Structure probing data (DMS and 2A3) for a 177-nucleotide construct. Reactivities are given for positions 27 through 126. It was measured as part of the RMDB library OK2TRN. The DMS profile rests on 37,268 reads. For DMS the reverse transcriptase was MarathonRT. For 2A3, 13,873 sequencing reads were counted. The RNA was probed in 150 mM KOAc, 10 mM MgCl2 and 150 mM bicine (pH 8.5) at 24 C.
RNA sequence: GGGAACGACUCGAGUAGAGUCGAAAAACUGAGUUUGUGGUUCUUUGCUGUGCCAGCCCUAGGAAACACAUGCAGUGAGGGAGGUACAGCAAAGGCGUCAUUAAGCCAACCGCUGCUAACUGACUGCACUAUGUCCUUAUUUCGAUAAGGACAUAGUAAAAGAAACAACAACAACAAC
Reactivity to DMS in 0.01 (KOAc 150mM, MgCl2 10mM, bicine 150mM(pH8.5), 24C), signal-to-noise 9, nucleotides 027 to 126: a110c090u010g010a090g010u000u010u010g020u000g010g010u010u000c020u000u000u000g010c010u000g020u000g000c010c010a140g020c010c010c000u000a120g010g010a130a110a300c050a050c080a130u010g020c190a100g010u000g000a030g010g000g010a300g010g000u000a020c010a010g000c000a000a000a020g000g010c090g010u010c080a040u000u010a090a080g010c030c090a080a120c110c100g010c050u000g000c040u000a050a090c130u000g010a090c040u000g010c130
Reactivity to 2A3 in 0.01 (KOAc 150mM, MgCl2 10mM, bicine 150mM(pH8.5), 24C), signal-to-noise 7, nucleotides 027 to 126: a000c070u080g020a050g080u070u130u130g060u090g030g030u090u020c010u030u020u010g010c000u000g000u010g010c010c030a220g070c120c040c000u060a080g220g180a080a180a010c060a010c030a100u300g170c080a050g030u050g080a030g010g000g000a010g010g000u000a000c000a000g000c000a000a000a000g000g000c010g040u040c010a070u090u230a110a020g000c020c010a040a040c040c060g020c070u050g000c010u030a030a090c030u060g140a050c030u090g020c050